Chemical mapping of a 177-nucleotide RNA with DMS and 2A3. For 2A3, 1,397 sequencing reads were counted. DMS adducts were read by reverse transcription with MarathonRT. The RNA was probed in 150 mM KOAc, 10 mM MgCl2 and 150 mM bicine (pH 8.5) at 24 C.
RNA sequence: GGGAACGACUCGAGUAGAGUCGAAAAUUCUGGGUGGGGCUGUCGGUCUAUCGGCCCGGCGGGACGGCCGAGCCGGCGCCGACCCGGGAGGAGACCGUCUACGUCGUGCUCGACGGCGAGCUGGUGGCGUACCUGAUCUGUUCGCAGAUCAGGUACGAAAAGAAACAACAACAACAAC
Reactivity to DMS in 0.01 (KOAc 150mM, MgCl2 10mM, bicine 150mM(pH8.5), 24C), signal-to-noise 2, nucleotides 027 to 126: u000u000c020u000g010g020g010u000g020g020g030g020c020u010g050u000c000g010g010u000c140u010a100u000c010g000g010c030c000c060g010g020c100g030g020g000a180c250g000g010c010c000g010a030g000c000c000g010g030c050g000c000c000g000a030c020c020c010g000g000g000a040g000g010a210g000a090c030c020g000u010c020u000a080c040g030u000c030g000u000g010c100u010c100g010a090c080g020g000c010g000a060g010c040u000g010g020u010g020g010
Reactivity to 2A3 in 0.01 (KOAc 150mM, MgCl2 10mM, bicine 150mM(pH8.5), 24C), signal-to-noise 1, nucleotides 027 to 126: u020u020c020u040g000g000g010u080g040g300g060g050c100u130g010u010c000g020g000u010c040u070a120u000c020g010g010c030c030c010g000g020c010g000g040g090a070c040g010g010c030c000g010a000g000c040c020g050g000c020g040c010c000g000a000c020c000c020g020g010g000a040g030g020a060g030a010c000c010g000u020c050u090a130c010g010u020c000g010u040g100c140u100c120g080a020c020g000g020c030g000a010g000c050u020g000g040u070g040g030